The record gives the reactivity of an RNA of 207 nucleotides to 2A3 and DMS. Conditions: 150 mM KOAc, 10 mM MgCl2 and 150 mM bicine (pH 8.5), 24 C. Source: RMDB library M2RFPK, as collected in RNAgym.

[RMDB]
RNA sequence: GGGAACGACUCGAGUAGAGUCGAAAAGAAUUGGUAUGUAAGCUACUUCUUCCAGUAGCUGCGUCAUAACAUCAAGGUUAUGCAUACUGAGCCGAAGCUCAGCUUCGGUCCUCCAAGGAAAACCAAAUACAGCUCAGCCCGUUCGCGGGCUGAGCAACAGAAAUAAGAUCUUCGGAUCUUAUUUCUGAAAAGAAACAACAACAACAAC
Reactivity to 2A3 in 0.01 (KOAc 150mM, MgCl2 10mM, bicine 150mM(pH8.5), 24C), signal-to-noise 3, nucleotides 027 to 156: g080a030a060u020u010g010g010u000a000u010g000u000a020a000g000c000u000a000c000u100u150c010u060u000c010c000a000g000u000a000g000c000u000g000c000g010u010c000a000u010a010a000c010a070u270c190a100a040g300g000u000u000a000u000g010c000a000u000a010c000u000g000a000g020c010c000g000a000a000g010c030u090c300a030g000c000u020u000c000g000g000u000c010c010u060c040c030a030a050g020g000a010a030a020a010c050c010a040a080a030u190a160c080a050g000c000u010c000a000g030c020c020c000g030u080u100c210g030c010g070g000g020c000u000g000a000g000c000a000a000
Reactivity to DMS in 0.01 (KOAc 150mM, MgCl2 10mM, bicine 150mM(pH8.5), 24C), signal-to-noise 1, nucleotides 027 to 156: g010a180a150u000u010g010g000u020a010u010g010u000a300a300g000c010u000a010c010u000u000c040u000u000c030c040a300g030u000a000g010c000u000g000c010g010u000c030a010u010a010a000c010a300u010c250a160a150g010g000u000u000a010u000g000c030a060u000a010c010u000g010a080g000c020c010g000a040a010g040c020u000c160a120g010c000u000u000c030g000g000u000c030c040u000c030c090a090a060g050g030a090a120a120a110c090c090a010a050a160u010a140c080a100g010c000u000c010a040g000c000c000c000g010u000u000c300g060c030g010g010g010c000u000g000a000g000c010a030a010